[RMDB]
An RNA of 177 nucleotides, treated with 2A3 and DMS and read out base by base.
RNA sequence: GGGAACGACUCGAGUAGAGUCGAAAAGGUAGCCACUUCGGUGGCUACCAAAGAGAUAGUACCUAUUGAGUUCCUGUGUAGGUACUCAUGAGAGGAUGUCAAAAACAUGAUUCUUCGGAAUCAUGAACCAGAUGAAGAAGUUCGCUUCUUCAUCUGGAAAAGAAACAACAACAACAAC
Reactivity to 2A3 in 0.01 (KOAc 150mM, MgCl2 10mM, bicine 150mM(pH8.5), 24C), signal-to-noise 3, nucleotides 027 to 126: g000g020u000a010g000c010c000a000c020u040u050c160g100g000u000g000g000c000u000a000c000c010a000a000a000g030a010g020a010u050a070g040u060a070c000c000u020a050u050u060g070a020g020u040u060c020c010u040g050u120g160u270a010g010g000u000a000c010u010c000a080u140g090a050g030a050g200g040a100u100g050u140c060a040a030a040a050a080c000a000u010g000a010u020u000c000u070u070c300g020g020a000a000u020c010a000u010g000a010a040
Reactivity to DMS in 0.01 (KOAc 150mM, MgCl2 10mM, bicine 150mM(pH8.5), 24C), signal-to-noise 2, nucleotides 027 to 126: g000g040u000a010g010c020c000a000c000u010u020c220g050g030u000g000g000c000u000a000c000c000a030a080a090g000a160g000a070u010a010g000u000a050c010c000u000a050u000u010g000a080g020u000u000c000c000u000g010u010g010u000a000g000g000u000a000c000u000c050a050u020g000a130g000a100g000g000a130u000g000u000c050a040a060a060a070a160c020a000u000g000a030u000u000c000u020u000c180g000g000a010a010u010c000a000u000g000a100a110